The record gives the reactivity of an RNA of 207 nucleotides to 2A3 and DMS. For DMS, 2,193 sequencing reads were counted.
RNA sequence: GGGAACGACUCGAGUAGAGUCGAAAAGGGGUCGAACGCCGCUCUCAUGACGAAGUUAGCGGGAGCACUGAAGCCUCCACGGUGCUUUGAUCGCUAAUCGAAUGAGAUGCGUUCGACGGAGGCACCCAAAACUUCAAUUGAGUUCGCUCAAUUGAAGCACAGAGUAUGUGUUCGCACAUACUCUGUGAAAAGAAACAACAACAACAAC
Reactivity to 2A3 in 0.01 (KOAc 150mM, MgCl2 10mM, bicine 150mM(pH8.5), 24C), signal-to-noise 4, nucleotides 027 to 156: g090g010g040g000u010c010g000a000a000c010g000c010c040g040c030u000c000u000c010a080u080g120a220c060g020a120a040g230u160u090a000g080c010g000g000g000a000g000c000a000c000u010g020a100a020g010c010c000u010c010c000a020c020g010g000u000g000c010u040u110u070g220a200u170c010g000c020u070a170a080u040c020g040a050a040u070g010a010g000a010u110g000c000g000u000u010c000g000a000c000g000g000a010g000g000c010a040c000c000c010a040a090a010a020c000u020u000c010a000a020u010u010g000a020g020u050u150c300g050c070u000c000a000a000u000u000g000a000a000g000
Reactivity to DMS in 0.01 (KOAc 150mM, MgCl2 10mM, bicine 150mM(pH8.5), 24C), signal-to-noise 1, nucleotides 027 to 156: g000g000g030g010u020c010g030a050a040c020g050c030c250g010c200u010c010u050c010a030u000g000a260c090g030a100a070g020u000u000a030g010c000g000g020g010a000g040c020a020c010u030g000a090a170g020c020c010u010c010c040a300c010g050g000u000g000c000u000u000u010g030a080u020c010g000c010u000a010a120u000c030g000a120a030u060g010a030g000a070u000g030c000g030u000u020c020g040a020c090g030g020a100g020g030c030a090c010c000c000a050a070a120a230c010u000u020c010a000a010u000u000g010a010g010u000u010c300g010c010u000c000a010a030u000u020g020a020a010g000